Description
Chemical mapping of a 177-nucleotide RNA with DMS and 2A3. The 2A3 profile rests on 2,200 reads. Values cover nucleotides 27 to 126.
[RMDB]
RNA sequence: GGGAACGACUCGAGUAGAGUCGAAAAGACUCUCUGAGUGUGACAGUCUCUCAGAGAGACACACAGUGUGUGUCAGACACACACAGUCACUGAGACAGAGACUGUCUGAGUCUCAGUGUCAGACUCAGUUGUUGACGGGAUUCGUCCCGUCAACAACAAAAGAAACAACAACAACAAC
Reactivity to DMS in 0.01 (KOAc 150mM, MgCl2 10mM, bicine 150mM(pH8.5), 24C), signal-to-noise 2, nucleotides 027 to 126: g020a140c000u000c000u000c000u010g000a030g020u010g020u010g010a080c040a030g040u010c040u000c000u010c030a060g000a030g010a020g020a040c060a080c190a070c180a150g020u010g010u010g010u000g000u000c230a200g010a300c000a010c000a010c000a030c040a030g010u000c010a020c040u020g000a040g000a040c090a100g020a050g010a030c050u000g010u000c010u000g000a110g000u000c000u000c040a110g000u000g030u000c040a030g010a080c040u000c030a070
Reactivity to 2A3 in 0.01 (KOAc 150mM, MgCl2 10mM, bicine 150mM(pH8.5), 24C), signal-to-noise 2, nucleotides 027 to 126: g020a020c000u000c000u000c000u020g010a010g000u100g030u010g090a060c030a000g060u100c010u000c010u010c040a020g010a010g000a020g040a010c000a000c010a020c030a110g010u010g000u020g000u010g000u130c120a050g160a120c010a000c000a000c000a000c020a040g020u040c010a010c060u040g050a000g040a060c020a070g130a030g030a160c040u050g080u000c020u030g120a070g040u000c000u000c040a070g130u050g060u100c080a010g010a080c020u020c080a030